Chemical mapping of a 177-nucleotide RNA with 2A3 and DMS. Source: RMDB libraries RFM100 and RFMREP, as collected in RNAgym. For 2A3 the reverse transcriptase was SuperScript II with manganese. Conditions: 150 mM KOAc, 10 mM MgCl2 and 150 mM bicine (pH 8.5), 24 C. For DMS the reverse transcriptase was MarathonRT.
RNA sequence: GGGAACGACUCGAGUAGAGUCGAAAACCUUAAACCAACGAUAACGGCUGUUAGGCCAUGUUUUGUAAGGGCUGUUAGGAGCGCUGUUAAGGAGUGUUAACGGUGAGUCGAUUUGGCCUGGUCAACGGUUGAGCCCUAGAUUCGUCUAGGGCUCAACAAAAGAAACAACAACAACAAC
Reactivity to 2A3 in 0.01 (KOAc 150mM, MgCl2 10mM, bicine 150mM(pH8.5), 24C), signal-to-noise 2, nucleotides 027 to 126: c000c000u040u160a140a120a020c040c010a030a070c050g030a000u060a270a040c040g000g000c000u040g110u300u140a120g070g000c000c000a010u030g080u000u100u010u030g080u020a030a060g010g010g000c030u030g040u090u180a110g030g010a060g000c040g040c030u000g010u000u030a050a010g150g160a250g210u300g000u070u000a040a000c010g000g000u020g010a010g130u040c030g000a040u000u000u190g000g000c050c000u000g030g000u150c120a040a000c000g040
Reactivity to DMS in 0.01 (KOAc 150mM, MgCl2 10mM, bicine 150mM(pH8.5), 24C), signal-to-noise 2, nucleotides 027 to 126: c000c000u000u020a050a150a130c080c030a070a100c130g030a120u020a070a080c090g000g000c000u010g000u020u010a040g020g000c010c000a080u010g030u010u010u000u000g000u000a150a090g000g000g070c000u030g020u000u010a080g010g000a060g010c010g040c020u010g030u020u000a040a090g010g010a090g010u050g000u000u000a010a010c000g000g000u000g000a030g010u010c000g010a170u010u010u060g020g020c000c000u000g000g000u000c110a030a070c140g000